Annotation: Conditions: 150 mM KOAc, 10 mM MgCl2 and 150 mM bicine (pH 8.5), 24 C. The record gives the reactivity of an RNA of 207 nucleotides to 2A3 and DMS. It was measured as part of the RMDB library OK3TST. The DMS profile rests on 2,662 reads. DMS adducts were read by reverse transcription with MarathonRT.
RNA sequence: GGGAACGACUCGAGUAGAGUCGAAAAUCUUAAUCAGUACUUAUUGAGCGCCUACUUUAAACCAGGCACUAUGCUAGUCUGUAGAUGCAAAUAAAAAUAAGACUUGGUUCCUGUCCUUAAAUUGGGAGACAGAUACAGAUAUUUAUAGUAAGGCAUAGAUAAUCAUUUACUUCGGUAAAUGAUUAUCAAAAGAAACAACAACAACAAC
Reactivity to 2A3 in 0.01 (KOAc 150mM, MgCl2 10mM, bicine 150mM(pH8.5), 24C), signal-to-noise 3, nucleotides 027 to 156: u020c020u060u140a050a040u130c040a050g040u080a140c030u100u100a120u130u130g030a060g020c080g000c010c000u020a070c000u100u130u220a120a100a050c060c020a040g030g040c030a020c080u080a040u200g010c020u010a050g050u060c040u040g030u040a020g010a100u060g020c040a020a080a120u150a070a170a030a040a000u060a000a060g020a060c000u050u030g020g000u080u020c000c000u000g010u010c010c000u100u070a180a220a090u210u100g010g050g010a080g010a020c000a010g020a030u040a070c010a000g080a030u080a100u130u100u040a110u040a030g030u030a030a080g030g000c030a020u040a070
Reactivity to DMS in 0.01 (KOAc 150mM, MgCl2 10mM, bicine 150mM(pH8.5), 24C), signal-to-noise 2, nucleotides 027 to 156: u000c050u000u000a040a090u000c030a120g020u010a150c040u000u000a030u000u010g010a100g020c040g040c040c010u010a030c080u000u000u020a010a080a150c150c080a070g020g030c020a100c100u000a040u010g040c010u010a200g020u000c020u000g000u020a010g010a140u000g010c030a190a120a090u040a050a040a140a090a100u000a060a050g010a060c040u000u000g030g030u000u000c040c010u010g030u000c020c020u010u030a060a070a270u000u020g020g020g000a190g000a050c040a010g000a220u010a020c020a040g000a050u000a070u000u000u000a090u000a150g010u000a030a050g020g020c000a080u000a130